[RMDB]
RNA sequence: GGGAACGACUCGAGUAGAGUCGAAAAUAUGCACGCCGGUGGAGGUGACUACGCGUGUAUGGUGUUCGUGACUCCCACGAGCUUUUCGCUGUCGCGCGCUGUUUCAAGAGUCGCGCUGCGCCACCGAAGUCGCUGGUGGAUUCGUCCAUCAGUGGCUAAAAGAAACAACAACAACAAC
Reactivity to 2A3 in 0.01 (KOAc 150mM, MgCl2 10mM, bicine 150mM(pH8.5), 24C), signal-to-noise 9, nucleotides 027 to 126: u140a020u030g010c010a000c020g020c010c020g030g000u030g010g040a060g000g060u080g040a040c010u060a030c060g000c010g000u010g020u030a050u080g070g010u030g020u020u030c010g010u020g110a150c040u020c040c030c000a010c020g010a010g010c000u060u050u060u090c040g000c050u060g040u130c030g000c000g000c010g000c030u050g070u120u170u110c110a120a040g030a010g070u110c010g000c010g000c030u030g000c020g000c010c000a020c000c000g030a020
Reactivity to DMS in 0.01 (KOAc 150mM, MgCl2 10mM, bicine 150mM(pH8.5), 24C), signal-to-noise 9, nucleotides 027 to 126: u030a040u010g010c010a020c020g010c030c130g000g010u000g010g000a140g010g010u020g010a070c020u010a090c180g010c010g020u000g010u020a020u000g010g020u010g000u000u000c010g010u000g000a140c110u020c080c100c000a100c060g000a030g000c030u010u010u020u010c050g010c050u000g000u020c070g010c010g000c060g010c060u010g000u020u020u030c160a120a120g010a110g000u010c030g010c030g000c040u010g010c040g000c030c020a040c040c010g010a130